Record summary:
The record gives the reactivity of an RNA of 177 nucleotides to 2A3. For 2A3, 633 sequencing reads were counted. Conditions: 150 mM KOAc, 10 mM MgCl2 and 150 mM bicine (pH 8.5), 24 C. Values cover nucleotides 27 to 126.

RNA sequence: GGGAACGACUCGAGUAGAGUCGAAAAAGCUCGCUCUACGGAGCGAGCACCCCUCCCCUCUCACACCCCCGUGAGAAGUGAGCGGGGGGCGGUCGGGGAGGGGACAACAGCCUAUACGUAGGCUGAAGCGCCGUGGAUAAUUCGUUAUCCACGGCGCAAAAGAAACAACAACAACAAC
Reactivity to 2A3 in 0.01 (KOAc 150mM, MgCl2 10mM, bicine 150mM(pH8.5), 24C), signal-to-noise 2, nucleotides 027 to 126: a000g000c030u000c000g030c020u000c000u000a170c300g100g000a010g000c030g040a000g000c040a000c000c000c000c000u020c000c000c000c000u030c000u050c000a100c000a100c010c030c000c000c000g040u050g090a180g060a020a160g300u220g040a000g000c000g000g010g000g010g010g000c040g030g040u120c040g010g060g000g000a000g010g000g000g000a000c000a050a000c040a000g000c010c000u060a040u000a010c260g230u030a020g000g000c000u010g020a010a080